[RMDB]
RNA sequence: GGGAACGACUCGAGUAGAGUCGAAAAAUGUGCCGCGAAUAGCGAUAGGUGUCUUCUGGACACCCAACAUCAUACAAUUGCAACGCACUCCGCUGCCUGUCAAGUACUGGCGGUGGAGAGUAGGCUGCUUAUCCUAAGGAUUCGUCCUUAGGAUAAGAAAAGAAACAACAACAACAAC
Reactivity to DMS in 0.01 (KOAc 150mM, MgCl2 10mM, bicine 150mM(pH8.5), 24C), signal-to-noise 9, nucleotides 027 to 126: a040u010g010u010g010c120c010g020c040g000a110a080u030a130g010c030g000a140u010a130g000g010u000g010u000c000u010u030c290u040g010g010a010c000a010c000c000c110a070a070c120a060u010c110a090u020a090c160a090a070u010u000g000c020a070a130c060g000c030a150c000u000c000c000g010c000u000g000c000c000u000g000u000c040a120a150g010u030a030c000u000g000g020c000g000g020u000g000g010a000g010a030g020u000a070g000g010c020u000g000
Reactivity to 2A3 in 0.01 (KOAc 150mM, MgCl2 10mM, bicine 150mM(pH8.5), 24C), signal-to-noise 9, nucleotides 027 to 126: a000u120g030u080g070c020c020g010c030g040a090a130u110a150g020c030g040a040u070a050g010g000u000g000u010c020u160u090c210u280g090g000a000c000a010c000c000c000a060a070c020a070u170c010a030u090a190c060a100a150u120u110g020c030a060a050c070g000c020a020c000u000c000c000g000c010u000g000c000c000u030g020u040c090a250a130g030u080a160c010u030g000g000c000g000g000u010g000g000a000g000a000g000u030a050g020g030c010u020g000

The data come from the RNA Mapping Database (RMDB), libraries RFM100 and RFMREP. The record gives the reactivity of an RNA of 177 nucleotides to DMS and 2A3. 2A3 adducts were read by reverse transcription with SuperScript II with manganese. Values cover nucleotides 27 to 126.